[RMDB]
An RNA of 177 nucleotides, treated with DMS and 2A3 and read out base by base. The RNA was probed in 150 mM KOAc, 10 mM MgCl2 and 150 mM bicine (pH 8.5) at 24 C. DMS adducts were read by reverse transcription with MarathonRT. Reactivities are given for positions 27 through 126. In probing experiments dimethyl sulfate is read out at A N1 and C N3, which are open when not base-paired.
RNA sequence: GGGAACGACUCGAGUAGAGUCGAAAAGAGUAGUAGUUCGCUACUACUCAAAGGCACAAAAGGCACAGUUCUAAAGUGCAUGGAACUCGCCAAGUGCCCGUGAAAGUAAAUCCUUCGGGAUUUACAAACGCUAGGUUAUAUUCGUAUAACCUAGCGUAAAAGAAACAACAACAACAAC
Reactivity to DMS in 0.01 (KOAc 150mM, MgCl2 10mM, bicine 150mM(pH8.5), 24C), signal-to-noise 4, nucleotides 027 to 126: g000a030g010u000a000g000u000a000g020u000u000c210g030c010u000a000c000u000a000c000u000c010a010a080a050g000g010c000a000c010a040a080a160a220g000g000c000a070c210a020g020u000u000c000u000a040a120a160g030u000g010c270a090u000g000g000a000a000c000u010c200g000c010c010a050a300g000u000g000c000c000c040g010u010g010a090a100a090g000u000a000a010a010u000c000c000u010u010c200g030g000g010a010u000u000u000a000c000a050a070
Reactivity to 2A3 in 0.01 (KOAc 150mM, MgCl2 10mM, bicine 150mM(pH8.5), 24C), signal-to-noise 3, nucleotides 027 to 126: g000a000g000u000a000g000u000a000g000u020u060c200g040c080u000a010c000u000a000c010u000c000a010a020a000g000g000c020a000c010a000a170a040a120g000g000c000a040c070a090g000u000u000c020u040a150a140a150g230u250g140c030a040u100g000g010a000a000c010u010c060g000c000c020a040a060g000u000g000c000c000c020g090u140g160a150a040a000g000u000a000a000a000u000c010c000u020u060c140g070g000g000a000u020u000u000a000c000a020a160